This 177-nucleotide RNA was probed chemically with 2A3 and DMS. DMS adducts were read by reverse transcription with MarathonRT. As a SHAPE reagent, 2A3 marks flexible, mostly unpaired nucleotides at the ribose 2'-OH. The 2A3 profile rests on 1,172 reads. The reactions ran in a buffer of 150 mM KOAc, 10 mM MgCl2 and 150 mM bicine (pH 8.5), at 24 C.

[RMDB]
RNA sequence: GGGAACGACUCGAGUAGAGUCGAAAAAAGUAGAACUGCUUUCCGCGCGCCGUUACGGCCUGCCGCGCGGCAAGGUCCGUCAGGUGGUUGGCUCCAUCGAUAGUGAAAAGGCGCUGUCGAUGAUCGACGAGGAUUAUGCAUUCGUGCAUAAUCCUCGAAAAGAAACAACAACAACAAC
Reactivity to 2A3 in 0.01 (KOAc 150mM, MgCl2 10mM, bicine 150mM(pH8.5), 24C), signal-to-noise 1, nucleotides 027 to 126: a000a000g100u110a070g020a150a060c120u000g000c000u050u020u000c000c020g050c000g030c030g000c000c000g060u080u110a030c030g000g000c000c000u000g000c040c000g110c030g010c000g050g020c020a060a020g020g000u120c020c000g040u050c000a020g000g050u030g010g020u080u100g050g040c000u080c050c000a000u000c000g040a020u000a010g040u030g120a120a030a180a220g230g040c000g000c000u020g020u000c040g000a020u030g020a090u150c070g050a060
Reactivity to DMS in 0.01 (KOAc 150mM, MgCl2 10mM, bicine 150mM(pH8.5), 24C), signal-to-noise 2, nucleotides 027 to 126: a000a050g000u000a040g000a060a150c060u010g020c020u000u000u010c020c000g010c160g020c070g000c000c040g010u000u000a070c070g000g000c050c020u000g030c050c000g020c290g000c120g010g010c040a020a050g000g000u010c020c010g020u010c200a160g000g010u010g000g010u010u010g000g010c050u000c040c010a030u020c020g000a020u010a030g000u000g010a100a080a120a070g010g010c020g000c010u000g000u010c000g010a020u010g010a130u000c100g020a240